[RMDB]
This 177-nucleotide RNA was probed chemically with DMS and 2A3. For DMS, 2,657 sequencing reads were counted. The 2A3 profile rests on 5,164 reads. For DMS the reverse transcriptase was MarathonRT. Source: RMDB library OK2TRN, as collected in RNAgym. The RNA was probed in 150 mM KOAc, 10 mM MgCl2 and 150 mM bicine (pH 8.5) at 24 C.
RNA sequence: GGGAACGACUCGAGUAGAGUCGAAAAGAGCGAUCAACCAAGGCGAAGUGAAGGGGAUCACUAGGCUGCGUCUACAUUAGUAGUUAAUGCCAACGCAACCCCAAGUGAACGCCACACUAGAUCGCGAGGGUAUGUAUUGGUUCGCCAAUACAUACCCAAAAGAAACAACAACAACAAC
Reactivity to DMS in 0.01 (KOAc 150mM, MgCl2 10mM, bicine 150mM(pH8.5), 24C), signal-to-noise 3, nucleotides 027 to 126: g000a240g000c000g040a020u000c000a120a090c080c070a160a170g000g030c050g010a130a110g010u010g010a160a100g020g000g000g000a220u000c020a020c010u000a120g000g030c020u000g000c020g000u000c010u010a040c000a020u000u000a020g000u020a150g000u010u000a010a010u000g010c060c090a070a060c030g000c010a010a020c050c010c100c140a080a030g010u020g000a020a210c020g010c000c000a100c060a020c060u010a100g000a100u010c020g000c000g000a070
Reactivity to 2A3 in 0.01 (KOAc 150mM, MgCl2 10mM, bicine 150mM(pH8.5), 24C), signal-to-noise 3, nucleotides 027 to 126: g110a010g010c010g010a010u000c010a030a090c040c030a050a100g060g000c050g050a080a010g070u070g090a200a170g000g010g020g000a050u040c020a010c040u050a040g030g000c020u010g010c020g050u000c010u030a010c010a060u100u080a030g100u010a010g040u080u070a060a010u070g040c100c070a020a030c050g000c030a020a100c000c000c010c010a020a020g000u010g030a110a030c020g050c030c000a020c010a000c000u030a070g000a030u000c000g000c010g000a090